[RMDB]
RNA sequence: GGGAACGACUCGAGUAGAGUCGAAAAGAUAUGGAUGGCUGAGACCAAACGAAGCGUCGGAAACGACGCAAGUUUGGUCUAGCCAUCCUAAGUCAAAGUGCUUUCUUUGUUCGCAAAGAAAGCACAACAGUUCAUAUAACUUCGGUUAUAUGAACUGAAAAGAAACAACAACAACAAC
Reactivity to DMS in 0.01 (KOAc 150mM, MgCl2 10mM, bicine 150mM(pH8.5), 24C), signal-to-noise 5, nucleotides 027 to 126: g000a050u000a300u010g010g000a010u000g000g020c010u000g000a040g010a010c000c000a000a020a010c010g010a280a200g010c000g030u000c000g000g000a110a140a300c010g010a010c010g020c000a020a100g010u000u000u000g000g000u000c000u000a010g000c000c000a000u000c000c000u000a010a080g000u000c050a080a110a140g010u000g000c000u000u000u000c000u010u000u000g000u000u010c280g020c010a010a000a010g000a010a000a000g010c000a000c000a030a130
Reactivity to 2A3 in 0.01 (KOAc 150mM, MgCl2 10mM, bicine 150mM(pH8.5), 24C), signal-to-noise 3, nucleotides 027 to 126: g030a030u070a050u160g000g000a010u000g020g010c050u270g280a020g000a070c010c000a000a000a000c020g040a300a060g000c000g020u000c000g020g030a100a110a030c030g010a010c000g000c000a000a000g000u000u000u000g010g000u000c010u000a000g000c000c000a000u010c000c000u000a010a000g010u000c040a010a010a090g000u000g010c000u000u020u000c000u010u030u010g030u060u120c200g000c220a000a000a000g000a000a010a000g000c010a000c010a000a000